[RMDB]
RNA sequence: GGGAACGACUCGAGUAGAGUCGAAAAUCGCUGGAAUUCUCCAAGCUGCUGGUCGAAAAGGCCGAUAUUGCAGUGGCUCCGGGCAUCGGCUUCGGCGAAAUGGGCGACGAUUACGUUCGUAUCGCGCCCUAUCCUCCGCUUUCGAGCGGAGGAUAGGAAAAGAAACAACAACAACAAC
Reactivity to DMS in 0.01 (KOAc 150mM, MgCl2 10mM, bicine 150mM(pH8.5), 24C), signal-to-noise 7, nucleotides 027 to 126: u010c050g010c020u000g000g020a060a110u010u000c030u000c010c060a080a090g000c010u000g010c040u000g010g010u010c060g010a090a080a140a130g000g000c010c010g010a070u030a060u030u020g010c070a040g010u010g010g010c030u000c060c060g000g020g000c060a050u010c040g010g000c040u000u000c050g010g010c010g010a020a080a070u020g000g000g000c000g000a110c020g000a040u010u030a040c060g010u030u040c140g000u000a020u000c000g010c040g000c040
Reactivity to 2A3 in 0.01 (KOAc 150mM, MgCl2 10mM, bicine 150mM(pH8.5), 24C), signal-to-noise 9, nucleotides 027 to 126: u050c020g000c050u040g050g050a110a070u090u030c060u020c030c010a060a030g010c010u020g010c010u060g030g130u090c060g070a100a080a130a110g050g000c010c000g010a040u060a110u110u250g050c030a020g030u040g080g000c020u040c060c060g050g030g010c030a070u040c020g000g000c000u040u030c040g030g000c020g020a030a040a120u140g020g020g020c020g010a210c010g020a090u110u110a080c100g090u130u130c060g020u090a030u050c010g000c000g020c010
Overview:
The data come from the RNA Mapping Database (RMDB), library OK1LIB. Chemical mapping of a 177-nucleotide RNA with DMS and 2A3. The reactions ran in a buffer of 150 mM KOAc, 10 mM MgCl2 and 150 mM bicine (pH 8.5), at 24 C. For DMS, 27,657 sequencing reads were counted. For 2A3, 12,551 sequencing reads were counted. For 2A3 the reverse transcriptase was SuperScript II with manganese.